[RMDB]
RNA sequence: GGGAACGACUCGAGUAGAGUCGAAAACGGCAUGAUACCACCGUUAUCGGGUCAACAGAGUAGUUGCAAAUGACAACAAUGCUCAGGGUUAUGCUCUCGCUGCCUAAUGGCGGUGCGGGAAACCCGCAAAAGAUAUUGAUCUUCGGAUCAAUAUCAAGAUACCGCUAACCUUCGGGUUAGCGGUAUCAAAAGAAACAACAACAACAAC
Reactivity to 2A3 in 0.01 (KOAc 150mM, MgCl2 10mM, bicine 150mM(pH8.5), 24C), signal-to-noise 4, nucleotides 027 to 156: c020g000g000c030a020u130g010a010u030a050c010c000a000c010c010g130u060u050a030u080c070g010g010g010u000c010a030a050c060a040g030a010g000u070a030g000u020u010g080c070a100a230a300u250g080a140c000a040a000c010a010a170u160g020c010u020c070a030g030g000g010u050u050a110u300g090c000u010c000u000c000g000c000u010g000c010c010u220a300a100u060g000g000c000g040g000u000g010c020g010g000g000a010a000a000c000c020c020g010c020a060a080a000a010g000a000u000a000u000u000g000a000u000c000u030u100c220g080g000a000u000c010a000a000u000a000u000c000a000a000

Conditions: 150 mM KOAc, 10 mM MgCl2 and 150 mM bicine (pH 8.5), 24 C. Structure probing data (2A3) for a 207-nucleotide construct. Reactivities are given for positions 27 through 156. For 2A3 the reverse transcriptase was SuperScript II with manganese.